[RMDB]
RNA sequence: GGGAACGACUCGAGUAGAGUCGAAAAUAGUCAACUAAGGGAUCUGCGUCAACAUUCUUGGCCCGCAGGCCAUGGUGCAGAUAGUCGCAAGACUUGGCGAGACCAUCGCUCAAAUGACGACCGCAUGCCACCCCGCAGACUUCGGUCUGCGGGGUGGAAAAGAAACAACAACAACAAC
Reactivity to 2A3 in 0.01 (KOAc 150mM, MgCl2 10mM, bicine 150mM(pH8.5), 24C), signal-to-noise 1, nucleotides 027 to 126: u030a000g000u010c000a030a030c060u070a190a100g190g010g000a150u060c000u040g040c000g020u060c070a010a010c000a240u120u190c090u000u140g030g000c000c000c100g150c070a020g000g000c000c000a000u020g000g000u000g000c000a000g000a010u000a050g000u000c000g030c040a040a040g000a030c040u000u000g060g000c000g050a010g000a120c150c000a190u070c000g000c000u090c000a100a100a130u120g000a000c020g000a020c000c000g150c000a000u100g000